Chemical mapping of a 207-nucleotide RNA with 2A3. The RNA was probed in 150 mM KOAc, 10 mM MgCl2 and 150 mM bicine (pH 8.5) at 24 C.
[RMDB]
RNA sequence: GGGAACGACUCGAGUAGAGUCGAAAAGCGUACUACGAUCCCGAUGAAAGCAAAGGGAGAAGCAUUUCCGAAUAUCCCAAAUAGGAUAUUCGGUAGUGCUUCAUCGAUCUUUGCUGGAGGGAUCGUAUCGCAAAACGCAGCUCUUCGGAGCUGCGAACCCUAUUUCAGGUUUCGACCUGAAAUAGGGAAAAGAAACAACAACAACAAC
Reactivity to 2A3 in 0.01 (KOAc 150mM, MgCl2 10mM, bicine 150mM(pH8.5), 24C), signal-to-noise 2, nucleotides 027 to 156: g000c010g030u110a110c050u010a010c040g000a000u000c000c020c030g120a300u080g010a040a030a000g000c000a010a000a000g030g030g010a060g000a020a000g000c000a000u030u020u000c000c000g000a010a000u000a000u010c020c010c030a190a250a080u300a130g000g000a010u000a000u000u000c000g000g000u000a000g000u000g010c000u020u000c000a050u090c020g060a060u030c000u000u000u000g000c000u000g010g020a020g000g000g020a000u030c000g000u010a000u070c000g000c000a060a040a000a000c010g000c000a000g000c000u030c020u030u150c230g120g010a000g000c000u000g000c000g000a000a000